RNA sequence: GGGAACGACUCGAGUAGAGUCGAAAAGCCAGUUUUGUUCGCAAAACUGGCAAAAAACCUUUGUGGCUAGGACAUGACCCUUACUUCCCAUUGGGAAGCUAAGAGGUCAACAGCCUAGCCACUCUGGUAAAAAACGACCUCGUUCGCGAGGUCGUAAGUUUGAUAGACUAUUCGUAGUCUAUCAAACAAAAGAAACAACAACAACAAC
Reactivity to 2A3 in 0.01 (KOAc 150mM, MgCl2 10mM, bicine 150mM(pH8.5), 24C), signal-to-noise 1, nucleotides 027 to 156: g000c010c000a000g000u010u000u010u000g040u010u060c150g000c200a000a020a020a000c000u080g010g000c010a000a000a000a010a010a000c000c000u000u000u000g000u000g000g010c000u000a000g020g000a080c030a220u040g000a010c000c000c000u000u000a000c000u000u000c000c000c100a280u170u300g000g000g010a000a000g000c020u010a000a050g100a200g000g000u000c000a000a000c000a000g010c000c000u000a000g000c000c000a000c000u000c010u000g000g000u010a020a220a000a000a000a000c000g010a000c010c000u020c030g000u010u060c300g000c030g110a000g010g000u000c000g000u000a000a000
Reactivity to DMS in 0.01 (KOAc 150mM, MgCl2 10mM, bicine 150mM(pH8.5), 24C), signal-to-noise 1, nucleotides 027 to 156: g010c000c000a030g010u000u000u000u020g010u000u000c300g030c020a020a020a000a030c010u020g020g010c010a000a000a040a090a020a010c010c000u000u000u000g010u000g020g020c000u000a000g040g000a050c050a300u020g010a030c010c010c000u000u000a020c000u010u030c000c000c010a300u010u030g020g030g020a010a000g000c010u000a010a010g000a070g080g030u010c010a020a030c090a200g030c000c010u000a010g010c020c000a000c000u000c020u000g000g000u080a000a040a090a060a080a040c030g000a010c000c000u000c000g010u010u020c240g020c050g020a000g040g030u000c000g030u000a000a070